[RMDB]
RNA sequence: GGGAACGACUCGAGUAGAGUCGAAAACACUAACCUAAUUUCCGAGACAUUUUACAUGCCUGAAACAUGUCUUAGAAAUUAUGGUUUUUCUUGGUUUGUGUGCUGAACAAAGUAGAUUCCUUGUACCUAAAGAUUGCUUGUUCGCAAGCAAUCUUUAAAAAGAAACAACAACAACAAC
Reactivity to 2A3 in 0.01 (KOAc 150mM, MgCl2 10mM, bicine 150mM(pH8.5), 24C), signal-to-noise 5, nucleotides 027 to 126: c040a000c040u040a000a010c000c010u000a000a010u010u000u000c000c010g010a010g010a010c010a000u030u030u040u090a130c080a110u220g140c000c120u130g060a040a040a010c070a020u000g010u000c000u000u000a000g010a000a000a000u030u010a050u140g020g000u000u000u000u050u050c040u020u060g070g000u030u040u050g010u000g010u020g050c030u020g070a080a040c040a100a090a030g050u070a030g050a150u030u050c000c000u030u060g070u060a100c000c010
Reactivity to DMS in 0.01 (KOAc 150mM, MgCl2 10mM, bicine 150mM(pH8.5), 24C), signal-to-noise 3, nucleotides 027 to 126: c130a090c110u000a010a020c010c000u010a010a010u000u000u000c000c010g000a010g010a010c000a010u010u000u000u020a120c060a090u030g000c140c080u000g000a070a060a060c170a010u000g010u000c010u000u000a040g000a010a010a010u000u000a000u050g020g010u000u000u010u010u020c090u000u010g020g010u010u010u010g020u000g020u010g010c030u000g010a040a070c070a090a040a070g010u020a030g020a110u000u000c010c010u000u000g030u010a070c120c120